Overview: An RNA of 177 nucleotides, treated with 2A3 and DMS and read out base by base. The DMS profile rests on 19,358 reads. For DMS the reverse transcriptase was MarathonRT. The 2A3 profile rests on 8,803 reads.
RNA sequence: GGGAACGACUCGAGUAGAGUCGAAAAAGUGAGUCAGAGCUCCAAGCAUCUGAAGCAAAGGAGUCAUAUGUUCAUCUGUUGCCUCUUCUGUGAGGAAGGUGACCUGUGGUAGCAGUGUCUUACAUCAAUCCUAAAAAUACUUCGGUAUUUUUAGGAUAAAAGAAACAACAACAACAAC
Reactivity to 2A3 in 0.01 (KOAc 150mM, MgCl2 10mM, bicine 150mM(pH8.5), 24C), signal-to-noise 6, nucleotides 027 to 126: a010g020u020g020a010g020u040c020a020g020a030g160c010u000c020c010a030a020g000c000a030u060c020u170g040a080a010g020c020a020a040a060g020g010a000g000u010c010a010u040a020u120g060u060u130c050a170u040c070u040g090u080u060g040c000c000u030c000u080u000c040u070g110u080g030a040g020g050a120a000g010g020u040g030a100c030c040u130g020u070g120g050u120a020g020c010a010g050u020g020u090c020u010u040a020c010a050u050c050a070
Reactivity to DMS in 0.01 (KOAc 150mM, MgCl2 10mM, bicine 150mM(pH8.5), 24C), signal-to-noise 9, nucleotides 027 to 126: a100g010u000g010a030g020u000c020a050g000a300g000c010u000c030c030a070a210g000c020a040u000c060u000g000a100a240g000c030a020a060a090g000g000a030g000u000c030a020u000a050u000g010u000u010c140a100u010c030u000g000u000u000g010c070c010u000c010u000u000c080u000g000u000g010a070g010g010a070a020g000g010u000g000a070c110c080u000g030u000g010g010u000a030g020c020a080g010u000g010u000c020u000u000a040c050a110u000c150a080